[RMDB]
RNA sequence: GGGAACGACUCGAGUAGAGUCGAAAAGUUUAGGAUGUGUGAUACAUUAUCCAGCUAGAGACAAAAGGGAAAGAUAGAGUUGGUAUACAUGUGAUGUGUACAAAUUUAUUGGCACACACUCGCCCUAAACAGAAGACUUUCUGUAAACAGUACAGCACACCAGCUGAGCGUUCGCGCUCAGCUGGUGAAAAGAAACAACAACAACAAC
Reactivity to 2A3 in 0.01 (KOAc 150mM, MgCl2 10mM, bicine 150mM(pH8.5), 24C), signal-to-noise 1, nucleotides 027 to 156: g000u000u000u060a000g010g040a070u050g090u000g020u060g070a020u050a220c020a050u000u100a010u050c020c010a010g020c000u040a010g000a000g040a130c010a080a060a120a080g140g110g010a130a010a010g100a060u120a040g040a000g020u000u000g020g020u100a020u000a030c050a080u040g020u020g040a220u020g050u030g000u020a230c000a010a040a070u240u300u130a060u030u070g020g000c000a000c000a000c010a000c010u060c050g020c000c000c000u010a040a040a000c000a010g130a130a010g080a090c030u050u090u020c010u080g020u030a000a030a210c050a030g110u030a060c030a000g000c080a010
The record gives the reactivity of an RNA of 207 nucleotides to 2A3. The RNA was probed in 150 mM KOAc, 10 mM MgCl2 and 150 mM bicine (pH 8.5) at 24 C. The data come from the RNA Mapping Database (RMDB), library OK3TST.